[RMDB]
RNA sequence: GGGAACGACUCGAGUAGAGUCGAAAAGAUAUGGAACAGAACUACGUUAGUCUGUUCGACGAAGCGAGCAAUAUUUCGGAAACGAAAUAUUGCUCGCAGAGAACAGGUGGGACGCUGUUCCUAAGUCCAGUGGACUUAAGUUCGCUUAAGUCCACUGAAAAGAAACAACAACAACAAC
Reactivity to 2A3 in 0.01 (KOAc 150mM, MgCl2 10mM, bicine 150mM(pH8.5), 24C), signal-to-noise 2, nucleotides 027 to 126: g030a040u070a040u200g000g020a000a000c020a010g050a110a070c180u240a050c300g000u010u040a020g030u000c030u010g060u040u020c000g030a080c030g200a240a070g020c000g000a000g010c020a020a000u000a030u000u000u010c000g000g050a050a170a050c000g000a020a020a000u000a000u000u000g000c010u000c040g000c000a020g000a000g000a000a000c000a000g000g110u090g110g300g000a000c020g010c030u040g000u010u000c000c010u010a160a010g070u020c030
Reactivity to DMS in 0.01 (KOAc 150mM, MgCl2 10mM, bicine 150mM(pH8.5), 24C), signal-to-noise 3, nucleotides 027 to 126: g020a100u000a270u010g010g000a030a000c000a010g010a140a080c130u010a300c030g000u000u000a300g000u000c000u010g000u000u000c000g000a120c290g020a120a110g010c000g010a010g000c000a010a010u000a000u000u000u010c010g000g000a090a090a250c000g020a010a010a000u000a000u010u000g010c000u000c010g020c010a010g010a110g000a010a010c000a000g000g000u000g000g010g010a030c020g010c020u000g000u000u000c010c010u010a050a150g010u000c030